Structure probing data (2A3 and DMS) for a 177-nucleotide construct. Source: RMDB libraries RFM100 and RFMREP, as collected in RNAgym. The 2A3 profile rests on 1,716 reads. The RNA was probed in 150 mM KOAc, 10 mM MgCl2 and 150 mM bicine (pH 8.5) at 24 C.
RNA sequence: GGGAACGACUCGAGUAGAGUCGAAAACUUCUCGUUCCCACUUAAUUUCGCAGUUUAUUGUCCUUGACUUCUACCACGAGAAAAAAAAUUAGGAAAAUACAACACUGCCCGUGCAGAGUUUUCUGAGAAGGAUAUGUUAGUUCGCUAACAUAUCCUUAAAAGAAACAACAACAACAAC
Reactivity to 2A3 in 0.01 (KOAc 150mM, MgCl2 10mM, bicine 150mM(pH8.5), 24C), signal-to-noise 4, nucleotides 027 to 126: c050u110u030c020u020c020g030u040u000c000c040c010a000c040u090u170a070a250u100u060u080c100g000c070a010g010u020u060u070a080u060u050g070u030c010c000u040u100g060a080c030u050u040c020u130a130c020c030a110c100g050a040g000a030a060a000a010a000a000a060a070u110u070a040g040g000a020a020a080a050u130a030c040a060a000c000a040c030u020g010c000c030c010g100u150g030c060a020g030a030g190u040u020u000u050c010u000g050a090g090
Reactivity to DMS in 0.01 (KOAc 150mM, MgCl2 10mM, bicine 150mM(pH8.5), 24C), signal-to-noise 3, nucleotides 027 to 126: c210u010u000c040u010c000g010u000u000c000c000c000a270c160u010u020a050a090u000u010u020c020g000c050a070g010u010u000u020a060u020u030g010u000c020c040u000u010g020a080c070u000u010c040u000a060c060c030a060c070g010a050g020a020a000a000a060a090a070a130a180u010u050a050g000g010a040a050a030a070u000a060c170a050a100c020a070c030u000g000c020c140c110g020u010g020c080a040g000a150g010u010u000u000u000c000u000g010a220g020